Chemical mapping of a 177-nucleotide RNA with DMS and 2A3. The data come from the RNA Mapping Database (RMDB), library OK2TST. For 2A3, 8,244 sequencing reads were counted. 2A3 adducts were read by reverse transcription with SuperScript II with manganese. The reactions ran in a buffer of 150 mM KOAc, 10 mM MgCl2 and 150 mM bicine (pH 8.5), at 24 C.
RNA sequence: GGGAACGACUCGAGUAGAGUCGAAAAUCGAGGGCACCACCGCGACCGGCUCGGCGACCGUCGUUAGCAGCGUGUGCGCGCGAUCGCCGGGCGGAACCUCGAACACCUGCUUGACGUGCACGAUGCCUCCCAUACAAGUUUUCGAACUUGUAUGGGAAAAAGAAACAACAACAACAAC
Reactivity to DMS in 0.01 (KOAc 150mM, MgCl2 10mM, bicine 150mM(pH8.5), 24C), signal-to-noise 7, nucleotides 027 to 126: u010c020g010a040g000g000g010c110a110c100c100a070c090c050g010c050g000a160c040c010g010g000c010u000c010g010g010c000g000a020c010c010g010u010c030g030u010u000a170g030c050a090g010c200g010u000g020u000g020c000g010c020g010c030g010a030u000c030g010c000c000g010g000g010c010g000g010a070a160c030c010u000c020g000a040a110c110a110c030c020u000g010c060u000u000g010a080c060g020u000g000c020a050c040g000a100u010g010c070c100
Reactivity to 2A3 in 0.01 (KOAc 150mM, MgCl2 10mM, bicine 150mM(pH8.5), 24C), signal-to-noise 2, nucleotides 027 to 126: u020c000g000a030g010g010g050c090a030c070c020a060c040c040g030c010g070a070c010c030g070g040c010u010c010g000g000c000g020a020c020c000g180u260c030g040u090u080a040g030c070a020g030c090g150u210g060u080g120c000g000c000g000c000g010a020u030c030g000c010c010g000g000g000c000g000g000a000a010c000c010u000c000g000a020a010c040a050c010c010u040g040c040u070u080g050a050c040g030u030g010c040a000c060g060a020u150g070c060c010